[RMDB]
RNA sequence: GGGAACGACUCGAGUAGAGUCGAAAAAUUGACGCACCACUACUACAGUCCCAACGACUGAGGGACUCGUCGACUCGGUUAAGAUCGGAAACCGGGUCGAGGUAUAGUGAAUGAGUUCCAAUUCUCCAUUUACGGCAUCUUGUGCGAACCGAUCACGCGAUGGCUCUUUGUUCGCAAAGAGCCAUCGAAAAGAAACAACAACAACAAC
Reactivity to 2A3 in 0.01 (KOAc 150mM, MgCl2 10mM, bicine 150mM(pH8.5), 24C), signal-to-noise 2, nucleotides 027 to 156: a000u060u140g020a010c040g040c010a000c030c000a000c000u020a010c010u020a000c040a030g010u000c000c010c020a070a120c130g230a130c060u290g070a070g010g030g000a010c010u030c000g110u000c000g000a000c000u000c000g010g030u030u020a100a010g000a010u000c010g000g000a070a010a010c030c030g000g010g000u010c000g000a000g000g000u170a110u010a120g010u030g030a010a070u080g000a010g090u080u140c070c010a080a140u170u030c000u070c050c030a080u120u110u110a060c090g030g050c010a070u010c030u050u110g010u010g010c030g020a030a010c010c010g000a000u030c050a000c020g100
Overview:
Conditions: 150 mM KOAc, 10 mM MgCl2 and 150 mM bicine (pH 8.5), 24 C. This 207-nucleotide RNA was probed chemically with 2A3. For 2A3 the reverse transcriptase was SuperScript II with manganese.